Source information
Structure probing data (2A3 and DMS) for a 207-nucleotide construct. The DMS profile rests on 2,862 reads. It was measured as part of the RMDB library OK3TST. Conditions: 150 mM KOAc, 10 mM MgCl2 and 150 mM bicine (pH 8.5), 24 C.

[RMDB]
RNA sequence: GGGAACGACUCGAGUAGAGUCGAAAAAUGCUUUGUGUGUCAUCAUAUGAGUUCUGAUAGUGCACACACAAAAGACAAUUUCAAUGUGAUUUCAUGAGGUUAGCUUCUGUGUAGUGCUACAUAAAAUAUAGACCUUUAUUGCUCACAAAUUGGAAUGUGAUAGUUGUACCUUCGGGUACAACUAUCAAAAAGAAACAACAACAACAAC
Reactivity to 2A3 in 0.01 (KOAc 150mM, MgCl2 10mM, bicine 150mM(pH8.5), 24C), signal-to-noise 5, nucleotides 027 to 156: a000u110g000c030u020u030u020g010u000g000u010g040u050c010a050u010c020a030u090a070u290g120a190g070u220u150c070u070g060a060u080a090g050u030g010c020a010c000a000c000a000c000a000a030a010a000g040a040c020a010a050u000u020u020c030a100a100u050g050u060g100a260u110u150u180c050a040u040g010a010g050g010u040u050a010g010c010u040u020c030u060g040u020g020u050a240g010u050g070c010u080a030c010a050u170a040a080a060a000u200a020u070a050g040a000c000c000u040u060u070a040u100u070g010c000u000c030a030c020a010a120a180u080u040g020g080a070a020u180g060
Reactivity to DMS in 0.01 (KOAc 150mM, MgCl2 10mM, bicine 150mM(pH8.5), 24C), signal-to-noise 2, nucleotides 027 to 156: a010u010g000c050u000u000u010g040u030g050u010g010u000c050a040u010c040a070u010a070u020g020a210g000u000u000c120u010g050a100u000a050g040u000g040c080a060c010a040c010a000c000a010a010a020a040g020a110c030a000a080u000u000u000c020a070a090u000g000u000g020a160u000u020u000c060a110u010g000a070g020g020u000u000a060g020c090u010u000c040u010g040u000g040u000a100g050u000g020c050u010a070c070a080u010a030a040a050a150u000a150u010a060g030a030c010c030u000u000u010a030u020u010g030c070u020c020a090c010a240a120a120u000u000g000g010a120a060u020g010